About this RNA:
Structure probing data (DMS and 2A3) for a 177-nucleotide construct. As a SHAPE reagent, 2A3 marks flexible, mostly unpaired nucleotides at the ribose 2'-OH. The 2A3 profile rests on 4,579 reads. The data come from the RNA Mapping Database (RMDB), library M2PK90. DMS adducts were read by reverse transcription with MarathonRT. For 2A3 the reverse transcriptase was SuperScript II with manganese.
RNA sequence: GGGAACGACUCGAGUAGAGUCGAAAAGUAAAGGCCGAACGAGCGCUAAUGCGCAUGCUAGAAAAUCGUAGGCCAUCGUAGUGUGAGCAUGAGCACGAAAGAAACACACACAUGCACGUGCAAAAAAGAUAGGUACAGUGUUCGCACUGUACCUAUCAAAAGAAACAACAACAACAAC
Reactivity to DMS in 0.01 (KOAc 150mM, MgCl2 10mM, bicine 150mM(pH8.5), 24C), signal-to-noise 3, nucleotides 027 to 126: g040u010a060a080a100g000g030c000c020g030a100a100c040g010a060g010c030g030c020u000a070a100u030g010c010g020c010a050u010g030c100u010a070g010a070a050a060a220u010c010g010u000a200g010g000c020c000a040u010c110g020u000a050g000u000g010u010g000a040g000c040a040u000g000a110g010c000a030c040g000a050a070a080g010a040a070a090c100a040c130a050c060a110c080a040u000g010c060a080c080g000u000g000c070a000a050a060a050a060a070
Reactivity to 2A3 in 0.01 (KOAc 150mM, MgCl2 10mM, bicine 150mM(pH8.5), 24C), signal-to-noise 3, nucleotides 027 to 126: g020u050a080a100a040g030g000c020c010g040a130a050c020g000a060g030c040g000c080u140a270a140u280g000c020g000c020a020u120g050c040u140a070g120a070a130a020a040u030c030g020u010a010g020g000c000c000a000u040c000g020u040a070g010u000g030u020g080a020g010c030a030u030g030a010g020c020a020c040g040a050a070a020g080a000a070a010c080a010c000a010c020a000c010a080u080g010c050a030c080g050u080g000c020a050a050a040a000a000a070